[RMDB]
RNA sequence: GGGAACGACUCGAGUAGAGUCGAAAAGGUGCUGGGCGAGGGCCGCACCCUGGCCGCGCUCGCCUUGCCGCUGUGGUGGGCACUGCCGGCGGCCUGGGCCGCGCUGCUUGCCAGUGGCUGGCUGCCGCAUAACUAAUCACUUCGGUGAUUAGUUAUGAAAAGAAACAACAACAACAAC
Reactivity to 2A3 in 0.01 (KOAc 150mM, MgCl2 10mM, bicine 150mM(pH8.5), 24C), signal-to-noise 9, nucleotides 027 to 126: g080g010u070g010c040u070g030g050g040c020g020a050g010g050g010c030c030g020c020a080c010c000c020u040g050g000c010c000g020c040g030c010u030c030g000c010c000u020u100g020c010c020g030c100u140g080u180g130g030u040g010g030g000c050a050c150u090g060c050c050g090g000c000g010g010c000c010u090g010g060g000c010c020g010c040g010c020u080g050c010u050u080g030c020c010a040g010u050g080g000c030u040g030g000c030u050g020c000c010g000
Reactivity to DMS in 0.01 (KOAc 150mM, MgCl2 10mM, bicine 150mM(pH8.5), 24C), signal-to-noise 9, nucleotides 027 to 126: g010g010u000g010c050u000g020g020g010c020g010a070g010g010g020c030c060g010c120a150c070c070c040u000g000g010c010c090g010c050g010c010u000c060g000c010c010u000u010g020c020c020g010c110u000g010u010g020g020u000g000g000g000c030a070c100u000g010c080c060g010g010c000g010g000c020c040u000g010g010g020c170c050g010c060g010c020u000g010c040u000u000g010c050c020a060g010u000g000g010c020u000g010g010c060u000g010c010c020g010

Annotation:
Structure probing data (2A3 and DMS) for a 177-nucleotide construct. Values cover nucleotides 27 to 126. For 2A3, 34,019 sequencing reads were counted. For DMS the reverse transcriptase was MarathonRT. For 2A3 the reverse transcriptase was SuperScript II with manganese.